Structure probing data (2A3 and DMS) for a 207-nucleotide construct. DMS adducts were read by reverse transcription with MarathonRT. Conditions: 150 mM KOAc, 10 mM MgCl2 and 150 mM bicine (pH 8.5), 24 C. For 2A3 the reverse transcriptase was SuperScript II with manganese.
RNA sequence: GGGAACGACUCGAGUAGAGUCGAAAAAUAUCUCAAUUCAUCCUCAGCACCUCAAAAGGCACUGGGGACAGGCUCAGAGGUUGUUACUGCUAAAGGUCACACAGAUACACUUCCUCGUUAGCAGUACCACAUGUACUGACACCAACCCUUCCUCCGACGCUAUGCUUUUAUUCGUAAAAGCAUAGCGAAAAGAAACAACAACAACAAC
Reactivity to 2A3 in 0.01 (KOAc 150mM, MgCl2 10mM, bicine 150mM(pH8.5), 24C), signal-to-noise 4, nucleotides 027 to 156: a000u150a110u040c040u010c060a080a100u200u150c030a040u030c010c000u020c020a000g010c050a020c010c020u090c110a090a120a100a090g020g020c040a020c040u010g010g000g000g010a000c030a060g040g000c010u020c030a010g000a020g060g000u030u030g030u060u070a020c010u000g000c010u040a030a010a030g050g010u090c030a020c010a020c010a140g140a170u200a130c080a050c130u090u080c010c000u060c110g140u020u030a030g000c010a000g010u000a010c020c010a050c010a030u100g050u130a090c020u040g020a040c000a020c080c040a050a090c010c000c000u030u060c010c010u060c060c010g090a030
Reactivity to DMS in 0.01 (KOAc 150mM, MgCl2 10mM, bicine 150mM(pH8.5), 24C), signal-to-noise 1, nucleotides 027 to 156: a110u010a060u000c030u000c010a060a150u000u000c060a300u000c000c000u000c000a040g000c010a040c010c010u000c040a110a110a140a300g000g000c010a060c030u000g010g000g000g040a020c020a000g040g010c120u000c050a110g010a080g040g110u020u000g010u000u000a030c020u000g000c040u000a050a080a050g020g020u020c050a090c060a180c030a120g000a150u000a120c060a050c030u000u000c020c010u010c060g020u000u000a050g010c010a020g020u000a020c030c080a080c180a150u000g020u000a100c030u010g010a020c020a090c010c000a050a150c020c010c020u000u000c010c020u000c010c000g030a260